[RMDB]
RNA sequence: GGGAACGACUCGAGUAGAGUCGAAAACAGGGGAAUGGAUAUGAAAACUUUUGUAUCAAAUAGACAUUAGCGAGGAGAGGGAUGCUUCACAUCCUAGGUUUGUGUGAUGUCGGCACAGCUGAUGAGGCACUAUUAACACAUUCGUGUGUUAAUAGUGAAAAGAAACAACAACAACAAC
Reactivity to 2A3 in 0.01 (KOAc 150mM, MgCl2 10mM, bicine 150mM(pH8.5), 24C), signal-to-noise 9, nucleotides 027 to 126: c040a020g020g010g010g040a030a070u100g050g020a030u030a040u140g070a040a060a070a110c050u080u100u090u110g040u040a070u070c040a040a100a140u130a070g060a020c020a040u060u080a020g040c040g040a030g040g030a080g040a040g050g020g010a020u060g020c020u080u060c040a050c000a060u020c000c010u030a060g080g040u050u160u130g060u010g030u040g030a060u070g050u080c000g010g010c030a030c020a040g000c020u040g020a080u080g030a100g050g000
Reactivity to DMS in 0.01 (KOAc 150mM, MgCl2 10mM, bicine 150mM(pH8.5), 24C), signal-to-noise 9, nucleotides 027 to 126: c080a100g010g000g010g010a130a060u010g010g000a050u000a040u000g000a050a060a190a130c150u000u000u000u000g010u000a040u010c060a060a080a100u010a090g000a060c040a040u000u000a100g010c060g010a060g010g010a100g010a110g010g000g010a050u000g010c080u000u010c160a070c050a040u000c020c040u000a100g010g010u000u000u000g020u000g010u000g010a050u000g010u000c070g010g000c040a040c060a070g010c040u000g010a070u000g010a110g010g010